[RMDB]
RNA sequence: GGGAACGACUCGAGUAGAGUCGAAAAACAGUCAGUACGCUGACUGAGGGAAACGGGAGCCGGGCUUGGGACCAGAGCCAUCCCAAGUCCAAGGCCAAGUAGGCUCUAGUGAUGGUACGCCAUCACAAAAACUGGUCUACCUUCGGGUAGACCAGAACAUAGCGUUGAUCUUCGGAUCAACGCUAUGAAAAGAAACAACAACAACAAC
Reactivity to 2A3 in 0.01 (KOAc 150mM, MgCl2 10mM, bicine 150mM(pH8.5), 24C), signal-to-noise 2, nucleotides 027 to 156: a000c000a000g010u010c000a010g020u080a070c200g060c150u010g000a000c000u020g010a110g020g020g030a060a220a070c140g090g000g000a070g040c030c010g000g010g000c000u000u010g000g000g000a020c030c000a030g000a000g010c010c000a000u010c010c000c000a000a000g010u030c010c000a060a040g030g000c030c020a040a010g050u160a160g090g000c000u000c000u010a010g000u000g020a020u000g000g040u040a030c280g010c010c000a000u000c010a000c000a000a030a020a000a000c000u010g000g000u000c000u000a000c000c000u030u090c210g080g000g000u000a000g000a000c000c000a000g000a000a000